[RMDB]
RNA sequence: GGGAACGACUCGAGUAGAGUCGAAAAGUCAGUCAACUAGCCCUGCGCUCCCGAGCUAGUGACUGACAGAAAAGAGCUGCUCGGUCAGAACAAAUCUGACUUCGGGAGCGCAGGAGAGCAGCUCAAACAUUUACCCGGCAUUCGUGCCGGGUAAAUGAAAAGAAACAACAACAACAAC
Reactivity to 2A3 in 0.01 (KOAc 150mM, MgCl2 10mM, bicine 150mM(pH8.5), 24C), signal-to-noise 3, nucleotides 027 to 126: g000u010c010a000g020u000c010a070a070c120u010a030g020c050c000c010u020g010c000g000c020u050c010c040c040g030a020g010c000u040a020g000u000g010a020c000u000g000a010c010a000g060a000a130a020a030g000a000g000c020u010g000c030u030c050g000g030u000c010a010g010a090a080c100a060a120a090u030c000u020g030a030c010u070u070c120g020g000g000a010g000c000g010c000a000g010g090a050g020a010g000c000a000g000c000u000c000a020a040a010
Reactivity to DMS in 0.01 (KOAc 150mM, MgCl2 10mM, bicine 150mM(pH8.5), 24C), signal-to-noise 2, nucleotides 027 to 126: g000u000c010a010g010u000c000a060a130c050u000a030g000c080c040c060u000g000c000g000c030u000c000c000c030g040a150g020c000u000a000g000u000g000a000c030u010g010a000c010a050g000a060a030a080a150g000a000g000c000u000g020c040u000c000g000g020u000c000a010g030a080a170c300a130a140a140u010c010u000g000a020c030u040u050c120g010g010g000a030g010c020g050c000a050g020g000a170g010a020g000c000a020g010c020u000c000a060a110a070